Structure probing data (2A3 and DMS) for a 177-nucleotide construct. Values cover nucleotides 27 to 126. 2A3 adducts were read by reverse transcription with SuperScript II with manganese. 2A3 is a SHAPE reagent: it acylates the 2'-hydroxyl of flexible nucleotides of all four kinds.
RNA sequence: GGGAACGACUCGAGUAGAGUCGAAAAGAAAGAAAGAAGAAGAAGAAAAAGAGGUCAAAUGUCAGAAUAUCGGGCGUAAAUACGACAUUAUGCAGAAAGCCGACCUCAAUGUCGUAAAGAAAGAAAACCGUACGUAUAGCUUCGGCUAUACGUACGGAAAAGAAACAACAACAACAAC
Reactivity to 2A3 in 0.01 (KOAc 150mM, MgCl2 10mM, bicine 150mM(pH8.5), 24C), signal-to-noise 2, nucleotides 027 to 126: g040a000a050a000g090a040a170a000g000a010a000g040a030a000g000a010a010g040a020a080a010a000a000g000a000g000g010u020c000a000a000a140u160g040u120c000a000g090a220a000u170a020u200c120g080g040g000c020g020u140a060a060a040u080a030c000g000a000c000a000u070u100a050u100g070c050a010g200a140a030a060g000c020c040g010a010c000c000u050c010a010a000u000g000u000c010g000u000a000a000a000g170a010a080a000g020a000a040a000a000
Reactivity to DMS in 0.01 (KOAc 150mM, MgCl2 10mM, bicine 150mM(pH8.5), 24C), signal-to-noise 1, nucleotides 027 to 126: g020a070a010a060g000a020a030a120g000a020a060g000a080a170g000a000a040g020a120a000a020a070a070g040a000g010g040u010c090a030a000a020u000g000u000c030a030g030a140a070u000a070u030c050g040g000g000c030g000u010a000a070a000u070a000c120g000a000c000a100u000u000a040u030g010c130a150g020a050a020a190g130c050c150g010a060c030c080u020c080a010a070u000g000u000c030g000u020a130a050a020g000a160a030a020g000a080a110a070a180
For DMS, 993 sequencing reads were counted.